[RMDB]
RNA sequence: GGGAACGACUCGAGUAGAGUCGAAAAAGGCACACUUCUAUACCAUUUUACAUACAGAGUGGCUGAGAGGUUCUCCUCAGAGCUCUGUUUGUGAACGCAGAGCUUACUGGAGAAGCGUUGUAAGAACUGCGUUCAUAGUUCUGUGAAUGCGGUGCCAUAUCAUCAUCGUAUUCGUACGAUGAUGAUAAAAAGAAACAACAACAACAAC
Reactivity to DMS in 0.01 (KOAc 150mM, MgCl2 10mM, bicine 150mM(pH8.5), 24C), signal-to-noise 3, nucleotides 027 to 156: a070g020g010c010a040c020a030c020u010u000c030u010a150u000a160c070c030a100u000u010u000u000a150c080a140u010a060c030a020g000a040g020u000g000g000c000u000g010a010g010a110g030g010u000u020c080u000c030c020u000c010a040g020a300g000c010u000c000u000g010u010u000u000g010u000g010a030a060c050g020c030a040g000a120g000c010u000u000a050c020u000g010g010a210g030a080a130g010c180g000u010u000g020u000a060a030g000a060a050c000u000g010c000g020u000u000c010a020u010a010g000u010u000c120u020g040u000g010a040a020u000g020c050g010g030u000g020c010c040a230
Reactivity to 2A3 in 0.01 (KOAc 150mM, MgCl2 10mM, bicine 150mM(pH8.5), 24C), signal-to-noise 5, nucleotides 027 to 156: a000g010g000c010a010c010a010c040u140u060c060u120a180u100a110c020c030a070u060u050u030u150a030c010a020u080a010c000a000g000a000g020u070g120g240c010u020g000a020g000a030g060g090u230u070c080u070c060c010u000c010a000g000a010g010c000u000c010u000g020u020u020u070g000u010g000a000a000c000g000c000a000g030a030g020c000u000u010a010c020u060g210g050a240g080a180a040g170c100g150u210u140g000u020a000a010g010a050a030c000u010g010c000g010u000u000c000a000u000a000g020u060u110c040u050g040u020g010a030a000u070g030c090g070g000u010g000c010c000a000

An RNA of 207 nucleotides, treated with DMS and 2A3 and read out base by base. The data come from the RNA Mapping Database (RMDB), library OK3TST. For DMS the reverse transcriptase was MarathonRT. Conditions: 150 mM KOAc, 10 mM MgCl2 and 150 mM bicine (pH 8.5), 24 C. For DMS, 6,019 sequencing reads were counted.